[RMDB]
RNA sequence: GGGAACGACUCGAGUAGAGUCGAAAAGUCAUUGAGCGUCAGGUUGCCCGGCGCGGCGGCGCUGAGCGGCAACUCAGCGGCGGAGCCAUCCAGCGAAGGAAGCAUCUGGUCCGUUGCUAAUCCUUCGCCUGGAGUAAAUUUUCGAAUUUACUCCAGGAAAAGAAACAACAACAACAAC
Reactivity to 2A3 in 0.01 (KOAc 150mM, MgCl2 10mM, bicine 150mM(pH8.5), 24C), signal-to-noise 9, nucleotides 027 to 126: g080u060c040a090u080u180g050a040g060c020g050u060c060a040g040g020u050u040g010c010c010c000g010g000c020g000c020g030g070c070g060g010c010g000c000u020g030a030g050c060g040g010c020a030a080c020u010c040a020g020c020g030g010c010g020g020a020g030c010c010a050u040c020c030a010g020c000g010a020a010g010g000a010a010g010c000a010u010c030u110g100g050u070c050c040g010u010u010g000c000u020a050a070u000c000c000u010u010c010g010
Reactivity to DMS in 0.01 (KOAc 150mM, MgCl2 10mM, bicine 150mM(pH8.5), 24C), signal-to-noise 7, nucleotides 027 to 126: g010u010c060a090u010u020g010a090g020c040g000u010c060a100g000g010u000u010g020c030c020c000g000g000c020g010c030g000g010c160g020g000c010g010c010u000g000a070g030c070g010g020c100a050a090c010u000c060a060g000c040g000g010c020g010g010a140g020c040c050a100u010c040c060a130g000c010g010a030a020g000g010a050a040g020c010a030u010c040u020g010g000u010c110c100g000u010u000g000c010u000a070a090u010c010c000u000u000c040g010
This 177-nucleotide RNA was probed chemically with 2A3 and DMS. 2A3 adducts were read by reverse transcription with SuperScript II with manganese.